[RMDB]
RNA sequence: GGGAACGACUCGAGUAGAGUCGAAAAAUGAUCUGUUGGGUGUCAUCAAGAAAAUGCUAAGCAAUGCGCAGGGGCAAGGGAGAAAUGAUUAUGAGUAUAUCACCAUUGCUGAUCAUAUAGAUUAUGAAAGAGGCGUGAAUUUCGAUUCACGCCUCUUAAAAGAAACAACAACAACAAC
Reactivity to DMS in 0.01 (KOAc 150mM, MgCl2 10mM, bicine 150mM(pH8.5), 24C), signal-to-noise 1, nucleotides 027 to 126: a040u060g020a120u060c030u010g000u020u010g000g000g000u000g000u000c090a090u000c030a150a240g000a000a050a080a010u030g040c000u000a140a110g020c050a020a020u000g000c150g020c080a070g050g010g050g010c080a090a000g000g000g020a110g000a040a030a090u000g000a020u020u000a030u000g000a210g020u050a040u020a120u000c010a050c090c030a090u000u000g000c000u000g030a040u000c010a020u070a010u050a040g000a120u000u010a000u000g000a090
About this RNA: Source: RMDB library OK1LIB, as collected in RNAgym. The record gives the reactivity of an RNA of 177 nucleotides to DMS. For DMS, 1,117 sequencing reads were counted.